[RMDB]
RNA sequence: GGGAACGACUCGAGUAGAGUCGAAAAGAGAACUGAAACUAUUUCCCUCUGAAUACUCAAUUGCUGAGGAAGACCCAUCUCUGACGGGGAAAUUGAAAGGACUAGUGGUGCCCCUAUUCAAUGGAAGGCUAUUAUCUCACUUCGGUGAGAUAAUAGCAAAAGAAACAACAACAACAAC
Reactivity to DMS in 0.01 (KOAc 150mM, MgCl2 10mM, bicine 150mM(pH8.5), 24C), signal-to-noise 3, nucleotides 027 to 126: g000a070g010a100a090c060u000g030a100a060a090c080u010a080u010u000u010c010c000c010u010c140u000g010a080a070u040a110c030u010c020a070a150u030u050g010c160u010g000a040g000g000a070a100g020a150c010c010c030a040u000c070u010c080u000g010a140c130g000g000g020g020a010a060a040u000u000g000a060a100a020g000g000a080c050u020a090g010u010g000g030u010g000c030c000c020c010u020a040u020u010c050a030a070u020g020g010a140a060g000
Reactivity to 2A3 in 0.01 (KOAc 150mM, MgCl2 10mM, bicine 150mM(pH8.5), 24C), signal-to-noise 4, nucleotides 027 to 126: g070a000g010a060a040c070u090g050a080a060a080c050u060a150u070u040u000c000c020c000u030c040u010g040a100a040u050a100c010u020c050a070a150u230u180g030c050u100g030a000g040g040a060a020g050a080c000c000c020a110u020c040u000c030u080g020a070c080g000g000g010g050a000a000a050u060u070g140a050a020a060g060g000a010c040u100a030g040u020g100g040u090g030c030c000c000c010u040a110u090u090c060a030a030u080g110g040a050a010g130